[RMDB]
RNA sequence: GGGAACGACUCGAGUAGAGUCGAAAAAUCCCCAUUCGUGGGGAUGGUUGAGCGUACUACCUACGGUGCAGCAUCAAUGAUGUGCUCCCAAAUAGGAGCAUUGAGAUGCUGAACUACACCUAUAGGUAUCGCCUGUCUCGCACUUUCGAGUGCGAAAGCGCUUAAAAGUUUUCGAACUUUUAAGCGCAAAAGAAACAACAACAACAAC
Reactivity to DMS in 0.01 (KOAc 150mM, MgCl2 10mM, bicine 150mM(pH8.5), 24C), signal-to-noise 2, nucleotides 027 to 156: a070u000c000c000c000c000a050u000u000c180g050u010g010g010g010g020a010u000g000g040u000u000g000a100g060c010g000u010a080c170u000a020c020c000u010a110c150g000g040u010g000c000a060g010c000a000u000c010a080a060u010g000a060u000g020u000g010c020u000c000c000c010a050a200a270u000a040g050g020a030g020c010a010u000u000g000a050g000a040u000g010c020u000g030a030a080c010u010a160c000a010c010c010u000a100u000a030g010g000u000a030u000c030g030c010c020u010g010u010c060u010c010g050c010a030c010u000u000u000c290g040a080g010u000g020c000g000a030a050a190
Reactivity to 2A3 in 0.01 (KOAc 150mM, MgCl2 10mM, bicine 150mM(pH8.5), 24C), signal-to-noise 2, nucleotides 027 to 156: a000u020c000c020c000c000a000u010u080c180g190u080g000g010g000g000a000u010g000g040u090u200g070a080g020c010g020u130a140c080u020a010c030c000u040a010c050g000g000u000g000c000a000g030c010a000u010c010a020a300u160g080a010u070g050u000g070c000u030c000c000c010a150a240a000u300a150g000g010a000g020c020a000u020u050g020a070g010a010u010g000c010u010g000a030a020c020u070a040c000a010c000c010u090a090u100a180g000g010u000a010u300c000g000c010c000u060g080u020c100u010c030g000c000a000c010u100u160u120c210g090a050g000u010g000c010g020a070a010a010
Description:
Chemical mapping of a 207-nucleotide RNA with DMS and 2A3. The reactions ran in a buffer of 150 mM KOAc, 10 mM MgCl2 and 150 mM bicine (pH 8.5), at 24 C. It was measured as part of the RMDB library RNAMAK. 2A3 is a SHAPE reagent: it acylates the 2'-hydroxyl of flexible nucleotides of all four kinds. Values cover nucleotides 27 to 156. The 2A3 profile rests on 1,159 reads.